[RMDB]
RNA sequence: GGGAACGACUCGAGUAGAGUCGAAAAAGUAUCGGGUUCGCCCGAUACUAGAGCACCACUCCUGCGGGAGUUAAGGCCAAACGCACAGGCCGGUGCAAAGCCAACUCAAGGGUUUCGACCCUUGAAACACAGAACUUUGAUUCGUCAAAGUUCUGUGAAAAGAAACAACAACAACAAC
Reactivity to 2A3 in 0.01 (KOAc 150mM, MgCl2 10mM, bicine 150mM(pH8.5), 24C), signal-to-noise 2, nucleotides 027 to 126: a000g000u000a010u000c000g000g010g060u040u070c210g070c020c000c000g000a000u000a000c000u010a010g010a010g020c010a000c020c000a020c000u000c000c000u060g020c220g110g000g010a000g000u020u150a060a030g010g000c030c010a100a150a050c180g000c090a060c030a130g000g000c010c000g010g000u000g000c000a000a050a030g060c020c010a050a040c060u000c010a000a000g020g000g030u010u090u120c150g080a050c010c010c000u010u010g000a010a010a000
Reactivity to DMS in 0.01 (KOAc 150mM, MgCl2 10mM, bicine 150mM(pH8.5), 24C), signal-to-noise 3, nucleotides 027 to 126: a010g010u000a000u000c000g020g030g010u000u000c190g060c010c000c000g000a000u000a000c000u000a030g000a250g000c040a020c000c020a090c000u020c050c000u010g040c140g050g000g000a030g000u000u010a080a190g020g010c010c000a050a060a140c200g020c230a090c160a090g010g000c030c010g030g020u000g010c020a040a070a130g010c030c060a080a130c200u020c000a020a010g000g010g020u000u000u000c160g010a030c010c000c000u000u010g000a000a130a160